[RMDB]
RNA sequence: GGGAACGACUCGAGUAGAGUCGAAAAGAAAACAUGGAAACAUGCAGGUGGCCACCCGCCCGGGCCACCGUUACUCCACUCCACUCCUUCGGGACUGGUUAGGAGGAACAUAACAGGGCAAAAAAAACGUUACGUAUAGUUUCGACUAUACGUAACGAAAAGAAACAACAACAACAAC
Reactivity to DMS in 0.01 (KOAc 150mM, MgCl2 10mM, bicine 150mM(pH8.5), 24C), signal-to-noise 3, nucleotides 027 to 126: g000a060a050a060a270c010a000u000g010g000a190a190a150c000a000u000g000c040a100g030g000u000g000g000c010c010a010c130c120c170g000c000c010c020g010g010g000c000c020a000c010c010g000u010u000a030c000u000c000c000a280c280u000c000c000a000c180u000c000c000u000u020c120g030g020g000a000c080u010g010g010u000u000a300g000g000a000g000g000a020a020c000a050u000a080a130c120a040g030g010g010c020a020a010a000a070a050a020a100a040
Reactivity to 2A3 in 0.01 (KOAc 150mM, MgCl2 10mM, bicine 150mM(pH8.5), 24C), signal-to-noise 1, nucleotides 027 to 126: g060a010a120a010a020c000a010u020g010g030a070a010a000c010a000u020g010c040a040g000g010u000g010g040c020c000a040c040c080c060g010c020c000c020g000g000g010c000c000a000c000c000g000u000u010a020c000u000c000c010a030c040u020c000c000a020c000u010c000c020u020u070c170g060g000g010a010c000u030g020g000u040u030a090g000g000a000g000g010a000a010c020a020u160a090a010c020a070g000g000g000c000a120a070a010a000a020a000a000a000